[RMDB]
RNA sequence: GGGAACGACUCGAGUAGAGUCGAAAAAGGACAUCAAGUAUCAUCUGUAUUCUUUAGACAAGCUAUCGCAACAUAAAGGAACCUACCUAGACGAUGAGGAAAUGGUGAGCCAUGGGAAAAAGAGGAAUGCCAUAGAGCUGUUCGCAGCUCUAUGGCAAAAAGAAACAACAACAACAAC
Reactivity to DMS in 0.01 (KOAc 150mM, MgCl2 10mM, bicine 150mM(pH8.5), 24C), signal-to-noise 1, nucleotides 027 to 126: a200g030g080a030c000a070u000c000a020a070g030u050a070u140c030a160u000c060u040g000u000a100u000u000c000u000u000u000a140g000a240c210a110a130g000c050u010a030u010c070g000c050a040a080c270a090u060a010a010a080g000g000a040a000c010c000u000a150c000c010u010a000g000a070c130g000a020u000g000a020g000g000a000a000a010u040g000g000u000g010a120g000c000c080a020u000g060g000g030a000a070a070a000a180g000a160g000g000a050a040
Reactivity to 2A3 in 0.01 (KOAc 150mM, MgCl2 10mM, bicine 150mM(pH8.5), 24C), signal-to-noise 1, nucleotides 027 to 126: a000g020g000a000c000a030u000c000a000a000g150u170a040u090c000a040u000c000u010g130u000a130u070u080c020u000u030u100a010g020a090c020a030a030g050c020u130a000u160c130g010c000a050a300c000a070u080a040a050a000g010g000a030a000c000c000u070a120c050c000u000a070g040a040c130g050a000u020g000a000g000g030a000a070a140u040g000g030u070g000a000g010c000c000a000u000g030g000g000a000a220a000a000a000g150a010g150g050a020a020